This 207-nucleotide RNA was probed chemically with DMS and 2A3.
RNA sequence: GGGAACGACUCGAGUAGAGUCGAAAACAGUAAGCAUGGAUAUGCUGACAAACAAGAAACUGAAUUGUCAGGCAAAGCUGGCGGCGCGAUAAAAACGGACAACAAAAUCAGUAUUGAAUUUAUCGGCAUACCUCAGCGUGAAAGUGCAAAUUAGCGAUACGCCCAUACAUUUCGAUGUAUGGGCGUAAAAAGAAACAACAACAACAAC
Reactivity to DMS in 0.01 (KOAc 150mM, MgCl2 10mM, bicine 150mM(pH8.5), 24C), signal-to-noise 1, nucleotides 027 to 156: c090a130g030u010a030a040g060c040a060u050g030g000a090u000a030u000g020c000u000g030a130c050a030a130a070c070a100a210g010a060a050a100c010u000g010a070a080u000u000g000u000c050a140g030g000c030a130a110a090g000c040u000g000g000c010g030g000c060g000c000g030a090u000a040a100a000a090a160c020g010g000a080c020a050a300c080a050a070a150a250u000c020a140g000u020a180u000u020g000a210a300u000u000u000a010u000c000g050g010c020a060u000a000c080c050u000c000a110g000c020g080u040g000a020a090a020g060u000g020c090a010a000a230u020u000a050g000c000g000a140
Reactivity to 2A3 in 0.01 (KOAc 150mM, MgCl2 10mM, bicine 150mM(pH8.5), 24C), signal-to-noise 2, nucleotides 027 to 156: c060a030g120u090a090a000g070c040a030u010g020g110a110u060a020u070g060c000u020g000a000c020a010a050a000c030a020a150g020a260a040a020c070u080g060a130a110u040u040g010u050c030a030g000g100c030a040a000a110g020c010u050g000g010c030g000g030c040g010c010g060a000u100a100a000a000a000a000c060g050g110a020c030a130a010c070a020a170a090a090u150c080a020g050u070a140u080u080g010a110a050u020u090u070a040u030c000g000g000c000a030u000a090c010c040u010c030a010g000c000g010u050g070a040a030a060g110u040g110c040a000a020a180u060u020a090g030c020g010a000

2A3 adducts were read by reverse transcription with SuperScript II with manganese. For DMS, 1,808 sequencing reads were counted. The RNA was probed in 150 mM KOAc, 10 mM MgCl2 and 150 mM bicine (pH 8.5) at 24 C.